[RMDB]
Annotation:
Source: RMDB library M2RFPK, as collected in RNAgym. Chemical mapping of a 207-nucleotide RNA with DMS and 2A3. The reactions ran in a buffer of 150 mM KOAc, 10 mM MgCl2 and 150 mM bicine (pH 8.5), at 24 C. In probing experiments dimethyl sulfate is read out at A N1 and C N3, which are open when not base-paired. DMS adducts were read by reverse transcription with MarathonRT. For 2A3, 8,726 sequencing reads were counted.
RNA sequence: GGGAACGACUCGAGUAGAGUCGAAAACGGAAGCAUUAAAACCAUUCGAGCUAGUCAAUGCGUGGCGGGUCUCUCCGCAGCGUGUUGGCGAAUGUAAAGAGUGACUAAGCAUGUAGUACCGAGGAUGAUAAGAGCAAUUCGUUCGCGAAUUGCUCAAGAUAGUAUAUUUGUUCGCAAAUAUACUAUCAAAAGAAACAACAACAACAAC
Reactivity to DMS in 0.01 (KOAc 150mM, MgCl2 10mM, bicine 150mM(pH8.5), 24C), signal-to-noise 3, nucleotides 027 to 156: c050g010g010a210a140g000c050a110u000u000a040a090a100a150c050c020a100u000u000c030g000a220g030c030u000a150g000u000c000a020a030u020g010c000g030u000g000g090c010g010g000g000u000c120u000c180u010c000c010g030c020a040g010c000g010u000g030u000u010g010g010c000g010a060a020u010g030u050a050a110a170g010a100g020u020g010a080c030u000a050a140g040c090a060u010g020u000a060g010u010a090c050c010g000a160g010g010a090u010g000a090u000a060a160g000a020g010c000a020a010u000u000c000g010u010u000c300g020c040g020a020a020u000u000g000c000u000c000a010a040
Reactivity to 2A3 in 0.01 (KOAc 150mM, MgCl2 10mM, bicine 150mM(pH8.5), 24C), signal-to-noise 7, nucleotides 027 to 156: c050g030g050a080a030g010c030a030u050u100a050a040a010a080c040c010a020u040u050c030g030a030g030c030u060a020g010u010c000a000a000u010g010c000g010u030g040g000c020g010g040g200u150c080u030c020u000c170c000g000c000a000g000c000g000u010g000u000u000g010g000c000g000a010a010u050g010u040a050a120a030g040a010g020u030g020a020c040u050a020a040g060c040a030u070g030u080a060g030u050a080c040c060g010a040g080g010a040u170g020a030u120a240a120g000a010g000c000a000a000u000u000c000g030u050u070c150g000c000g100a000a000u000u000g010c000u000c000a000a000